RNA sequence: GGGAACGACUCGAGUAGAGUCGAAAAAUGAUUCGUAGUGUAAGAGGAUCGACAGUCAUCGCUUGCCAGCAGGACCACCAAAGGAAUACGCUUCGGUAACUACUCGAGAUCCCAAGCGAUAAAACAACAUUACCUACUAAUUCGUUAGUAGGUAAUGAAAAGAAACAACAACAACAAC
Reactivity to DMS in 0.01 (KOAc 150mM, MgCl2 10mM, bicine 150mM(pH8.5), 24C), signal-to-noise 9, nucleotides 027 to 126: a070u010g000a060u000u000c040g010u000a090g020u010g010u010a080a090g020a110g010g000a040u000c040g020a100c120a070g010u000c070a070u000c060g010c040u000u000g010c040c030a070g010c050a070g000g000a100c050c060a060c060c070a040a080a100g010g010a080a080u010a080c100g010c100u000u000c040g010g010u000a080a110c010u000a010c000u000c000g000a020g000a110u000c000c000c010a090a070g010c150g000a090u000a030a040a060a070c160a080a120
Reactivity to 2A3 in 0.01 (KOAc 150mM, MgCl2 10mM, bicine 150mM(pH8.5), 24C), signal-to-noise 9, nucleotides 027 to 126: a000u090g010a020u040u040c040g030u090a100g060u040g050u200a100a050g040a070g110g030a040u030c040g040a030c040a030g050u070c030a030u040c040g010c060u030u070g030c000c020a020g020c020a020g020g070a020c020c010a030c020c030a110a070a030g080g020a090a060u080a070c040g010c020u000u020c010g000g020u040a130a120c000u000a000c000u000c000g010a000g010a020u000c000c000c000a010a010g090c050g080a070u150a200a110a010a020c070a030a010